[RMDB]
RNA sequence: GGGAACGACUCGAGUAGAGUCGAAAAAAUUGCCGAUUUAUUGGUGGUUCUCUCAGUGUCAGGACCUUACCCCACAGCUAUACGCCCAAAUAUAUUCUGCCAGUUAAGAAGAAAAAUGGUAAUGGUGGCUAAAAGACUAGUUCGCUAGUCUUUUAGCAAAAGAAACAACAACAACAAC
Reactivity to DMS in 0.01 (KOAc 150mM, MgCl2 10mM, bicine 150mM(pH8.5), 24C), signal-to-noise 3, nucleotides 027 to 126: a050a060u000u000g010c000c010g000a100u000u010u010a060u010u010g000g030u000g000g010u010u000c030u000c020u000c060a100g010u000g000u000c040a090g010g000a080c030c020u000u000a130c050c010c020c030a100c090a090g000c080u000a040u010a070c110g020c010c020c020a040a060a080u000a070u000a120u000u000c020u000g000c050c030a060g010u000u000a050a090g010a080a080g000a050a030a050a030a080u000g000g020u000a040a060u000g000g020u000g020
Reactivity to 2A3 in 0.01 (KOAc 150mM, MgCl2 10mM, bicine 150mM(pH8.5), 24C), signal-to-noise 2, nucleotides 027 to 126: a000a000u090u040g010c010c010g000a020u050u110u110a160u090u120g060g000u030g010g010u040u000c010u000c010u020c070a040g040u020g060u130c020a020g030g060a050c030c000u030u080a100c020c020c020c010a030c020a000g000c020u020a030u000a170c060g040c030c010c000a010a080a000u120a010u010a050u100u040c030u030g020c020c000a010g020u120u090a080a000g050a070a040g050a030a130a030a020a040u050g030g010u060a040a040u140g080g030u040g090
An RNA of 177 nucleotides, treated with DMS and 2A3 and read out base by base. The RNA was probed in 150 mM KOAc, 10 mM MgCl2 and 150 mM bicine (pH 8.5) at 24 C.